[RMDB]
RNA sequence: GGGAACGACUCGAGUAGAGUCGAAAAGAUAAAUGCAGUACUUCAAAUAAGAUUACACUUUAUGGAAGCAUUUGAUAUUGGAGAACAGAUGUUAUCCAAUCUGUACACAGAAAUUGUUUACACCCCGGGGGAGAAAGUUUUUCGAAACUUUCUCCCCAAAAGAAACAACAACAACAAC
Reactivity to 2A3 in 0.01 (KOAc 150mM, MgCl2 10mM, bicine 150mM(pH8.5), 24C), signal-to-noise 1, nucleotides 027 to 126: g090a070u280a000a090a020u020g000c000a000g110u070a200c040u120u060c070a000a020a260u150a040a050g010a020u280u300a130c170a020c020u160u260u260a130u110g000g040a000a110g030c020a000u000u000u070g020a000u170a000u250u080g090g020a250g000a020a010c000a000g260a090u130g110u010u010a000u040c000c000a000a110u000c000u130g050u040a020c090a000c000a000g170a070a240a000u150u040g020u070u200u000a020c070a150c000c000c000c000g060